RNA sequence: GGGAACGACUCGAGUAGAGUCGAAAAGACGUGGAGGUUGCGCGCCCUCCUUUGCGCGUAAGUACGUCGAAAUUCGGUGCUUUGGAUCGCACCGUUUGAUCCAUUUGAUAUCCGCUUUGUGCCGCGGUUGGGCAUUUACACUUACCCGAAAGGGGAAAAUUAGGGUCCAUUUCGAUGGACCCUAAUUAAAAGAAACAACAACAACAAC
Reactivity to 2A3 in 0.01 (KOAc 150mM, MgCl2 10mM, bicine 150mM(pH8.5), 24C), signal-to-noise 2, nucleotides 027 to 156: g050a000c020g020u050g010g120a100g050g120u040u030g010c010g000c000g000c040c010c000u230c030c010u130u110u090g000c000g000c000g000u020a040a010g110u020a030c010g000u010c010g030a130a060a000u030u000c010g000g020u010g010c000u200u050u150g040g070a110u180c060g000c000a000c000c000g000u040u020u020g010a010u020c020c020a040u100u030u200g060a050u020a020u090c000c010g090c090u090u070u230g120u070g010c040c000g050c030g020g000u090u130g010g000g000c000a000u070u030u040a040c070a030c010u080u190a090c000c020c000g060a090a010a020g000g000g030g000a000a140
Reactivity to DMS in 0.01 (KOAc 150mM, MgCl2 10mM, bicine 150mM(pH8.5), 24C), signal-to-noise 2, nucleotides 027 to 156: g030a030c040g020u000g010g000a090g020g010u010u000g020c030g000c020g020c030c110c070u000c120c050u000u000u010g010c020g040c000g060u010a030a080g020u010a020c020g030u000c030g050a090a070a070u000u000c020g020g040u000g020c010u000u010u000g050g020a160u000c180g000c010a170c020c030g000u000u000u010g010a130u000c020c030a170u000u010u010g030a170u010a130u000c000c000g010c050u000u010u000g020u010g020c040c080g000c040g010g010u010u030g020g010g000c030a060u000u000u000a100c080a060c060u000u020a180c020c000c000g000a070a100a240g000g000g000g010a010a040